[RMDB]
RNA sequence: GGGAACGACUCGAGUAGAGUCGAAAACCUGUUAUCUGACCAAUAACAGACUGCACCACAGCGUAAAAUCAUCUGAUUGGGUGAGUUGGUCGCACCGCCAUUUGACGAACGAACGCCAAGCCUAAGCACUACGAGUAUGUGUUCGCACAUACUCGAAUCACUAUAACAUCUUCGGAUGUUAUAGUGAAAAAGAAACAACAACAACAAC
Reactivity to 2A3 in 0.01 (KOAc 150mM, MgCl2 10mM, bicine 150mM(pH8.5), 24C), signal-to-noise 9, nucleotides 027 to 156: c000c000u000g000u000u010a010u000c010u000g000a010c000c000a010a010u010a000a010c000a010g070a080c070u100g020c040a040c050c010a040c040a030g040c020g050u080a040a080a060a070u070c040a030u020c050u080g080a170u090u180g110g000g000u010g010a020g010u020u030g020g010u010c020g020c040a010c000c010g050c020c010a060u060u060u090g050a040c030g030a160a010c050g020a060a010c040g040c020c030a060a040g020c010c030u130a090a020g050c060a060c150u170a060c070g000a000g010u000a000u000g020u000g020u040u070c150g040c060a000c000a000u000a000c000u000c000g000a000a020
Reactivity to DMS in 0.01 (KOAc 150mM, MgCl2 10mM, bicine 150mM(pH8.5), 24C), signal-to-noise 4, nucleotides 027 to 156: c090c000u000g020u000u000a020u010c000u000g030a080c070c060a300a060u000a020a050c010a050g020a160c040u010g000c040a110c030c020a050c050a080g000c080g020u010a060a070a080a100u000c040a060u000c060u000g010a110u010u010g010g020g030u000g000a300g000u000u000g020g000u000c000g010c030a050c030c000g030c050c030a190u000u000u010g040a040c020g010a080a110c070g010a060a080c040g020c030c010a050a190g000c040c030u000a040a080g010c040a120c050u000a150c010g010a030g000u000a010u010g030u010g000u000u010c300g050c020a020c020a020u000a000c000u000c000g000a030a080